RNA sequence: GGGAACGACUCGAGUAGAGUCGAAAAAGCAUCAGUGAGCUCGUAAAUCCAGCUGAAACAAACCAACUGCGAACGACGAACGUUUCGCCCUCGCCGCUUAAACACCGGUGAGCGUCUCAACGGCAGGCCGAUGGGCCGGGCCCAAGCCGCAAGGUGGCCAUUAUAUAAUGUUCGCAUUAUAUAAUGGAAAAGAAACAACAACAACAAC
Reactivity to DMS in 0.01 (KOAc 150mM, MgCl2 10mM, bicine 150mM(pH8.5), 24C), signal-to-noise 2, nucleotides 027 to 156: a080g030c040a080u000c040a110g010u000g040a100g020c020u000c020g050u000a040a080a120u000c030c030a140g010c010u010g020a110a120a180c100a090a110a160c090c020a030a090c030u000g000c010g010a040a080c030g010a080c060g020a060a150c080g000u000u010u000c000g010c020c010c040u000c010g040c000c000g000c040u010u000a160a060a110c070a110c180c010g040g010u000g000a030g010c050g010u000c030u000c050a080a000c080g020g070c000a070g030g040c000c000g010a150u020g020g020g020c030c020g010g030g030c000c020c020a060a140g020c060c010g010c060a040a110g020g030u000g020g010
Reactivity to 2A3 in 0.01 (KOAc 150mM, MgCl2 10mM, bicine 150mM(pH8.5), 24C), signal-to-noise 4, nucleotides 027 to 156: a000g010c020a040u060c020a020g030u030g070a030g030c030u030c060g090u110a050a100a100u080c060c030a020g030c010u060g070a090a080a040c050a050a070a060c050c030a030a070c050u110g010c030g040a040a010c010g120a020c050g030a150a040c020g020u040u080u070c030g010c000c000c010u010c010g000c010c010g000c010u040u070a040a040a000c020a010c020c010g020g010u010g020a010g000c010g050u010c010u020c070a090a050c010g020g000c000a010g010g020c010c010g090a090u130g070g000g000c010c010g010g000g010c000c010c000a040a010g000c000c010g030c050a050a030g020g000u000g030g010